[RMDB]
RNA sequence: GGGAACGACUCGAGUAGAGUCGAAAAGAUCCUAGCUGAUCCUAGAUCCAUGUGUGACUGCGUCAUGAUGUGCCAUGGUACGAUCGUACCUACAGCAGUACGCUGAGCUAGCUCAUAUAUCCAUGUACUCGGGGCAAUGGUUCGCCAUUGCCCCGAGAAAAGAAACAACAACAACAAC
Reactivity to DMS in 0.01 (KOAc 150mM, MgCl2 10mM, bicine 150mM(pH8.5), 24C), signal-to-noise 1, nucleotides 027 to 126: g000a030u010c050c000u000a000g040c100u000g000a040u030c080c050u000a040g020a020u020c020c220a070u010g010u000g050u000g000a080c030u000g010c070g060u000c040a100u010g010a140u000g000u000g000c060c080a120u000g000g020u000a060c020g000a160u000c120g020u000a040c020c010u010a090c140a150g010c040a030g010u100a080c050g010c000u020g000a150g000c020u000a010g000c160u030c050a070u020a020u010a070u000c030c020a080u000g000u010a080
Reactivity to 2A3 in 0.01 (KOAc 150mM, MgCl2 10mM, bicine 150mM(pH8.5), 24C), signal-to-noise 1, nucleotides 027 to 126: g020a060u070c020c010u000a020g000c130u090g000a070u000c040c070u080a050g020a070u000c090c030a100u170g050u000g060u070g000a040c000u030g000c030g060u050c030a050u120g110a070u140g040u040g070c080c030a100u130g050g000u000a000c010g140a220u180c150g000u000a010c020c000u040a070c020a020g000c000a000g050u020a030c040g000c010u000g010a030g000c030u040a040g000c010u020c080a050u110a020u090a040u150c030c020a030u080g000u040a040